[RMDB]
RNA sequence: GGGAACGACUCGAGUAGAGUCGAAAACACGAAGGUUGGCUAAUCCUGGUCGGACAUCAGGAGGUUAGUGCAGUGGCAUAAGCCACCUUGGCGCUAAUAGAUACUAAUCGUAGCAUAGCUGAAUAAACAGGUGCUAGGGAUUCGUCCCUAGCACCUGAAAAGAAACAACAACAACAAC
Reactivity to DMS in 0.01 (KOAc 150mM, MgCl2 10mM, bicine 150mM(pH8.5), 24C), signal-to-noise 1, nucleotides 027 to 126: c220a010c080g040a040a300g090g030u000u000g000g010c070u000a050a200u000c020c000u060g020g000u030c200g000g030a220c020a110u000c020a000g020g000a000g000g000u000u000a000g080u000g000c000a090g000u000g020g010c000a200u180a200a130g000c000c000a000c060c130u000u010g010g000c000g000c000u000a000a000u000a010g070a000u000a140c210u000a050a200u000c120g000u000a000g020c060a070u020a030g000c020u000g000a140a010u000a000a050a040
Reactivity to 2A3 in 0.01 (KOAc 150mM, MgCl2 10mM, bicine 150mM(pH8.5), 24C), signal-to-noise 1, nucleotides 027 to 126: c020a000c000g050a050a000g010g040u130u050g000g030c020u020a030a000u000c000c000u000g000g140u120c200g010g000a000c030a000u060c000a000g010g010a070g000g060u000u040a010g000u040g000c000a000g000u000g000g000c040a060u070a300a300g000c000c000a000c000c030u110u170g180g000c000g000c000u010a050a000u000a070g070a000u110a000c000u080a190a090u300c070g010u030a000g000c000a090u040a060g040c090u200g040a080a000u000a140a050a000
An RNA of 177 nucleotides, treated with DMS and 2A3 and read out base by base. Reactivities are given for positions 27 through 126. For DMS the reverse transcriptase was MarathonRT. The RNA was probed in 150 mM KOAc, 10 mM MgCl2 and 150 mM bicine (pH 8.5) at 24 C. The data come from the RNA Mapping Database (RMDB), library OK1LIB.